[RMDB]
About this RNA:
Structure probing data (2A3 and DMS) for a 177-nucleotide construct. The data come from the RNA Mapping Database (RMDB), library OK1LIB. High 2A3 reactivity points to a flexible backbone, as in loops and unpaired stretches. The reactions ran in a buffer of 150 mM KOAc, 10 mM MgCl2 and 150 mM bicine (pH 8.5), at 24 C. For 2A3, 2,332 sequencing reads were counted.

RNA sequence: GGGAACGACUCGAGUAGAGUCGAAAAUCUUUUUUAUAUGUACCUGAAUGUCCCUACCCGUUAUUAGGGAGAGACCUAUUAACCAAACUCAAGGCCCAGAUCCAUUUCACCGGAGAAGGAGCUAAUGCCGGACAAGAAUAUUCGUAUUCUUGUCCGGAAAAGAAACAACAACAACAAC
Reactivity to 2A3 in 0.01 (KOAc 150mM, MgCl2 10mM, bicine 150mM(pH8.5), 24C), signal-to-noise 5, nucleotides 027 to 126: u050c040u100u150u090u040u110u060a210u090a080u270g050u090a050c020c050u040g110a170a060u090g050u060c010c000c010u070a240c030c010c000g090u110u120a170u130u150a070g000g040g010a040g020a010g030a050c020c020u040a040u090u050a040a070c030c030a110a020a090c060u110c160a170a070g070g000c000c000c000a020g010a060u000c000c040a080u090u120u110c090a070c050c060g050g000a030g000a010a020g030g040a090g010c000u040a070a050u130g070
Reactivity to DMS in 0.01 (KOAc 150mM, MgCl2 10mM, bicine 150mM(pH8.5), 24C), signal-to-noise 1, nucleotides 027 to 126: u010c000u000u000u000u040u140u030a000u000a090u010g000u000a070c020c020u020g000a080a060u000g000u030c040c010c000u000a180c140c080c040g000u000u010a080u000u000a000g020g000g020a030g030a150g000a070c000c070u030a000u000u010a060a130c000c190a170a020a110c070u020c140a130a140g000g000c040c000c040a050g040a270u000c000c010a030u000u060u000c060a090c080c020g000g000a080g040a280a040g030g000a090g000c000u000a090a080u040g010